[RMDB]
Source: RMDB library RFMREP, as collected in RNAgym. An RNA of 177 nucleotides, treated with 2A3 and DMS and read out base by base. 2A3 adducts were read by reverse transcription with SuperScript II with manganese.
RNA sequence: GGGAACGACUCGAGUAGAGUCGAAAAUUUUCAGCAAAAUGCAGUUAGGGUGCUAGGAUUUCUCGAAAAUGAAAUUGGUCGUAUUAUGCAAGUAGGGCUUGCUUUUGCGCUCCCCGACUUCACCUCAGAUAAAGGAGAAGUUCGCUUCUCCUUUAUCAAAAGAAACAACAACAACAAC
Reactivity to 2A3 in 0.01 (KOAc 150mM, MgCl2 10mM, bicine 150mM(pH8.5), 24C), signal-to-noise 2, nucleotides 027 to 126: u040u010u020u070c010a000g000c010a020a060a100a110u110g040c010a010g040u070u100a060g030g020g020u030g040c040u050a050g000g080a060u020u100u000c040u010c060g110a120a100a040a100u110g010a030a030a040u070u040g040g020u070c010g010u020a040u090u020a040u230g010c000a000a030g030u030a080g160g130g030c020u010u010g000c000u030u040u040u030g000c030g010c020u010c020c000c000c000g010a010c000u050u040c040a030c030c020u020c020a020
Reactivity to DMS in 0.01 (KOAc 150mM, MgCl2 10mM, bicine 150mM(pH8.5), 24C), signal-to-noise 6, nucleotides 027 to 126: u010u000u000u000c040a090g020c120a070a060a080a090u000g010c050a050g010u000u000a080g010g000g010u010g010c080u000a080g020g010a070u000u000u000c020u010c080g010a060a060a100a080u010g000a040a050a050u000u000g010g010u000c030g010u000a040u000u000a040u010g010c030a020a030g010u010a120g020g020g000c020u000u000g010c010u000u000u000u000g010c040g010c120u000c040c010c020c030g000a050c040u000u000c050a070c080c030u010c120a130